[RMDB]
RNA sequence: GGGAACGACUCGAGUAGAGUCGAAAAGUCUGUUUUUUUGUUGGUUAAGCAUGGUAGAUAACGUUUGUUCAAACAAUAGCUUAAAGUGACAUGGUUUUGCCUAUGUUUAUGGUAAAAGCAUCGAUAGCUUUAUUCGAUCUUUCGAGAUCGAAUAAAGAAAAGAAACAACAACAACAAC
Reactivity to 2A3 in 0.01 (KOAc 150mM, MgCl2 10mM, bicine 150mM(pH8.5), 24C), signal-to-noise 2, nucleotides 027 to 126: g030u040c040u010g050u010u020u010u000u000u070u160g050u020u020g020g000u000u080a050a000g010c070a050u080g010g090u110a050g030a170u200a150a020c080g030u000u100u240g040u100u070c040a040a050a050c000a100a100u050a110g000c020u050u100a030a070a100g060u080g030a030c030a050u010g280g000u000u070u010u000g000c000c000u030a050u150g230u080u190u140a070u150g010g000u000a010a020a000a020g070c000a000u020c060g100a060u090a070g000
Reactivity to DMS in 0.01 (KOAc 150mM, MgCl2 10mM, bicine 150mM(pH8.5), 24C), signal-to-noise 4, nucleotides 027 to 126: g000u020c040u000g000u010u000u000u010u000u010u000g000u000u000g010g010u000u000a010a040g020c010a110u000g010g010u010a060g000a120u010a060a040c070g010u010u010u020g000u000u000c140a110a090a080c060a030a070u010a080g000c010u000u000a010a040a100g010u010g010a200c300a010u000g000g000u000u000u000u000g010c010c000u000a090u010g010u020u030u020a070u010g000g010u000a020a010a000a020g000c010a010u000c070g000a130u000a070g000